About this RNA
This 207-nucleotide RNA was probed chemically with DMS and 2A3. DMS adducts were read by reverse transcription with MarathonRT. The RNA was probed in 150 mM KOAc, 10 mM MgCl2 and 150 mM bicine (pH 8.5) at 24 C. It was measured as part of the RMDB library M2RFPK.
RNA sequence: GGGAACGACUCGAGUAGAGUCGAAAACAAUCAACAAUAUGGUUUGUGUAGUUUUGCUGAAAAUCGUUGAGGUUGUAUGGAAUAGGUUAACCGUAAGACCUUAAGUUGAAAAACUUUAAAAUUAAUCAAAAUCAUGUACACUUCGGUGUACAUGAAACAAGUUGCAUAACUUCGGUUAUGCAACUUGAAAAGAAACAACAACAACAAC
Reactivity to DMS in 0.01 (KOAc 150mM, MgCl2 10mM, bicine 150mM(pH8.5), 24C), signal-to-noise 1, nucleotides 027 to 156: c040a070a130u040c030a000a070c020a090a100u020a200u010g020g020u030u000u000g080u000g030u000a130g000u000u000u000u010g010c000u000g000a070a040a030a040u000c020g020u000u000g000a080g020g030u000u000g000u000a090u000g000g030a130a110u000a100g000g000u000u000a130a300c070c080g000u000a050a160g000a030c000c000u000u000a050a060g030u000u000g020a070a100a140a050a040c000u000u000u000a070a020a040a140u000u000a100a170u000c030a080a040a130a120u000c010a000u020g000u030a000c000a030c040u000u000c250g030g000u000g000u000a000c000a000u000g000a000a020a080
Reactivity to 2A3 in 0.01 (KOAc 150mM, MgCl2 10mM, bicine 150mM(pH8.5), 24C), signal-to-noise 3, nucleotides 027 to 156: c020a010a070u110c020a020a060c030a090a130u110a140u120g060g020u050u090u040g060u030g040u030a110g030u060u080u080u120g030c050u050g060a050a040a060a090u140c080g010u020u010g010a010g070g000u040u000g010u030a240u090g040g040a070a100u050a100g020g030u020u050a070a020c010c010g030u080a020a040g010a020c000c000u000u020a030a030g000u000u020g020a080a070a000a000a020c040u120u070u070a070a180a050a100u170u200a100a120u100c020a020a070a000a140u010c000a000u000g000u000a000c010a000c010u030u050c180g020g000u000g010u000a000c000a000u000g000a000a000a000